[RMDB]
An RNA of 177 nucleotides, treated with 2A3 and DMS and read out base by base. DMS adducts were read by reverse transcription with MarathonRT. For 2A3 the reverse transcriptase was SuperScript II with manganese. The RNA was probed in 150 mM KOAc, 10 mM MgCl2 and 150 mM bicine (pH 8.5) at 24 C. For DMS, 1,784 sequencing reads were counted. It was measured as part of the RMDB library M2PK90.

RNA sequence: GGGAACGACUCGAGUAGAGUCGAAAAGGGUUUGGAUUACAUCAAUAGUAACAUGAGCAGAAGUAAACAGAACUAGAAGUACUGCGGUUAUUCAAGUUCAAAGUUCACACUAUCGCAAUAAAGGGAAUAUAUCAGUGGUGUUCGCACCACUGAUAUAAAAAGAAACAACAACAACAAC
Reactivity to 2A3 in 0.01 (KOAc 150mM, MgCl2 10mM, bicine 150mM(pH8.5), 24C), signal-to-noise 2, nucleotides 027 to 126: g020g010g000u040u060u060g090g020a070u000u120a010c010a050u040c090a070a130u120a150g050u040a100a000c050a100u070g030a000g040c040a040g010a170a020g020u100a060a030a020c050a030g010a010a000c020u040a020g000a050a010g040u070a000c020u020g050c080g050g020u030u030a090u020u050c040a060a000g010u030u000c010a100a030a070g000u000u000c040a060c000a000c090u080a060u210c030g020c040a050a050u090a130a070a010g000g000g020a040a100
Reactivity to DMS in 0.01 (KOAc 150mM, MgCl2 10mM, bicine 150mM(pH8.5), 24C), signal-to-noise 3, nucleotides 027 to 126: g010g000g030u000u010u000g020g010a100u010u010a050c040a060u010c100a080a070u000a080g030u000a040a080c110a060u010g000a080g010c020a060g000a050a080g010u010a050a070a050c090a110g010a020a020c030u010a060g000a080a060g000u000a030c050u000g020c140g020g000u000u000a130u010u000c030a060a040g000u000u000c030a040a050a130g010u000u000c050a040c090a060c090u010a080u010c060g030c060a100a070u010a070a060a060g000g000g040a060a120